[RMDB]
RNA sequence: GGGAACGACUCGAGUAGAGUCGAAAAGAUAUGGAUUACUCGUCUGCUUCGAAGAACACGGUUCGGAAACGAACCGUGGGAGAAGCGACGAGGUAAUCCUAAGUCAAAAGGUAACUUCGGUUACCAAGAGAGCAAUAGUGUUCGCACUAUUGCUCUCAAAAGAAACAACAACAACAAC
Reactivity to DMS in 0.01 (KOAc 150mM, MgCl2 10mM, bicine 150mM(pH8.5), 24C), signal-to-noise 2, nucleotides 027 to 126: g020a040u000a300u030g020g000a040u000u000a010c000u010c010g000u010c000u040g050c000u000u000c000g000a110a220g010a160a120c030a000c020g000g020u000u000c010g000g010a080a120a250c040g010a030a000c000c000g000u020g000g020g020a160g030a000a020g040c010g010a010c000g010a010g010g000u000a000a000u000c000c010u040a000a110g000u000c040a110a090a140a130g010g010u000a000a020c000u000u000c190g010g040u000u000a000c000c010a100a100
Reactivity to 2A3 in 0.01 (KOAc 150mM, MgCl2 10mM, bicine 150mM(pH8.5), 24C), signal-to-noise 1, nucleotides 027 to 126: g000a040u080a060u170g010g010a020u020u010a030c000u010c020g020u090c180u300g090c030u030u010c050g300a300a080g020a080a000c010a010c000g030g020u040u010c000g000g110a140a060a060c020g010a000a000c000c000g000u000g000g000g020a040g010a000a010g000c000g010a000c000g000a000g000g010u000a030a000u000c000c000u000a100a030g060u000c040a000a000a160a180g000g010u000a010a010c000u060u160c300g150g040u010u030a040c000c000a000a010
Chemical mapping of a 177-nucleotide RNA with DMS and 2A3. DMS adducts were read by reverse transcription with MarathonRT. Conditions: 150 mM KOAc, 10 mM MgCl2 and 150 mM bicine (pH 8.5), 24 C. The data come from the RNA Mapping Database (RMDB), library TTRDES.